[RMDB]
RNA sequence: GGGAACGACUCGAGUAGAGUCGAAAAAUGUGAUUCCAGUCCAGGUACAGAUGACUAUUCUUAUUCUCAUUUUUUCCUUGUAGAGAAAGUGGGGAAGGGAUCUGAAUAAUUUUCAACUUAAGUAGUUCUAGCAGCUUUGUCGGUGAGGAAAAGGAGAAUAAUUAGGGGAGUUCGCUCCCCUAAUUAUAAAAGAAACAACAACAACAAC
Reactivity to 2A3 in 0.01 (KOAc 150mM, MgCl2 10mM, bicine 150mM(pH8.5), 24C), signal-to-noise 1, nucleotides 027 to 156: a000u100g050u040g020a080u120u000c030c050a030g010u000c010c000a010g060g040u100a110c030a020g050a120u050g020a070c040u040a080u180u010c030u100u120a270u180u020c010u000c000a020u060u000u000u000u000u140c010c010u020u050g100u270a040g000a000g040a060a030a030g050u110g010g010g010g000a020a000g000g000g040a030u010c030u070g030a050a030u070a100a040u090u140u160u140c060a070a030c040u060u060a040a090g010u010a070g000u130u020c020u050a040g060c030a030g000c020u000u100u170g060u080c040g020g020u090g050a020g000g000a030a050a010a040g060g020a030g060a030
Reactivity to DMS in 0.01 (KOAc 150mM, MgCl2 10mM, bicine 150mM(pH8.5), 24C), signal-to-noise 1, nucleotides 027 to 156: a060u000g010u000g000a110u000u000c060c040a200g020u010c030c040a110g000g020u000a080c080a100g030a110u010g040a100c070u000a120u000u000c020u000u000a110u000u000c020u000c000a000u000u000u000u000u000u000c000c000u000u020g000u000a170g020a110g000a030a030a050g040u000g000g010g010g020a030a120g050g000g010a020u000c050u000g000a070a050u010a040a110u000u000u000u000c070a060a110c050u000u000a010a090g020u000a050g020u000u000c050u000a120g040c010a140g020c040u000u000u000g000u000c050g050g040u000g000a090g000g010a040a030a090a090g000g000a130g010a060
This 207-nucleotide RNA was probed chemically with 2A3 and DMS. Values are in units of 0.01, from 0 to 300, in steps of 10. Conditions: 150 mM KOAc, 10 mM MgCl2 and 150 mM bicine (pH 8.5), 24 C. The DMS profile rests on 2,664 reads. Source: RMDB library OK3TST, as collected in RNAgym. DMS adducts were read by reverse transcription with MarathonRT. For 2A3 the reverse transcriptase was SuperScript II with manganese.